Chemical mapping of a 177-nucleotide RNA with 2A3 and DMS. 2A3 adducts were read by reverse transcription with SuperScript II with manganese. The reactions ran in a buffer of 150 mM KOAc, 10 mM MgCl2 and 150 mM bicine (pH 8.5), at 24 C.
[RMDB]
RNA sequence: GGGAACGACUCGAGUAGAGUCGAAAAAGGAUGAGGCGCUGGAACUUGCCGACCGCGUGGUGGUGAUGAGCCAGGGCCGCAUCGAGCAGGUCGGCACGCCCGACGAGGUCUAUGACAAGCCCAACUAUCGAUUUAUCAGGUUCGCCUGAUAAAUCGAAAAAGAAACAACAACAACAAC
Reactivity to 2A3 in 0.01 (KOAc 150mM, MgCl2 10mM, bicine 150mM(pH8.5), 24C), signal-to-noise 1, nucleotides 027 to 126: a000g190g000a030u010g020a050g000g000c140g010c220u010g040g000a030a100c010u020u030g000c050c000g040a090c010c000g280c260g170u300g000g000u000g000g000u020g000a110u040g020a030g030c010c020a000g020g010g000c000c010g020c010a000u010c010g010a010g020c060a030g050g050u000c000g030g020c050a020c130g000c010c000c000g030a030c000g000a080g100g000u040c050u100a150u160g050a080c020a070a030g060c000c000c000a030a050c040u160a100
Reactivity to DMS in 0.01 (KOAc 150mM, MgCl2 10mM, bicine 150mM(pH8.5), 24C), signal-to-noise 2, nucleotides 027 to 126: a070g050g010a040u010g000a050g030g020c010g010c000u000g000g000a080a130c010u000u000g000c000c010g020a020c000c020g020c300g040u000g010g030u000g000g000u000g010a030u000g020a120g020c010c000a040g000g010g020c020c000g000c020a000u000c020g020a080g000c090a120g010g000u000c010g000g020c040a130c200g000c060c000c010g010a030c020g020a140g000g040u000c040u000a080u010g010a070c100a050a120g010c000c010c020a110a070c230u010a120